Chemical mapping of a 177-nucleotide RNA with 2A3 and DMS. For DMS the reverse transcriptase was MarathonRT. Source: RMDB library OK2TRN, as collected in RNAgym.
[RMDB]
RNA sequence: GGGAACGACUCGAGUAGAGUCGAAAAGCUCCCUAGUGUCUUAGUCUCCACAAGCUAACUCAAGGGAGGGUCUCUGUGUGGGGUUGACCCAGGGGUUUGAUUGGUGCCUCUCUCUCUACAUUAAUCCGUUCCUCUCAGAUUUCGAUCUGAGAGGAACAAAAGAAACAACAACAACAAC
Reactivity to 2A3 in 0.01 (KOAc 150mM, MgCl2 10mM, bicine 150mM(pH8.5), 24C), signal-to-noise 1, nucleotides 027 to 126: g050c020u000c030c010c000u030a050g060u000g060u000c040u130u070a000g020u040c020u080c130c060a080c040a120a030g000c000u050a050a030c010u000c050a030a020g000g050g020a030g030g030g030u000c020u000c050u030g090u030g060u110g040g100g010g080u050u170g080a110c020c020c020a020g000g000g010g020u000u030u220g000a050u070u060g030g020u060g050c000c000u000c000u000c010u000c000u000c020u060a110c020a160u180u130a050a080u020c030c020
Reactivity to DMS in 0.01 (KOAc 150mM, MgCl2 10mM, bicine 150mM(pH8.5), 24C), signal-to-noise 1, nucleotides 027 to 126: g010c060u000c010c010c000u000a120g010u010g010u000c110u000u000a030g010u000c010u000c050c180a130c210a110a140g000c040u000a040a040c030u000c040a100a050g000g000g010a060g000g000g020u000c020u000c020u010g010u000g040u010g020g000g000g020u000u000g020a130c020c030c040a140g000g000g010g030u000u000u000g000a050u010u010g000g010u000g000c010c000u010c020u000c020u000c040u010c040u000a060c070a070u000u000a050a070u000c040c210
The RNA was probed in 150 mM KOAc, 10 mM MgCl2 and 150 mM bicine (pH 8.5) at 24 C. For DMS, 1,258 sequencing reads were counted.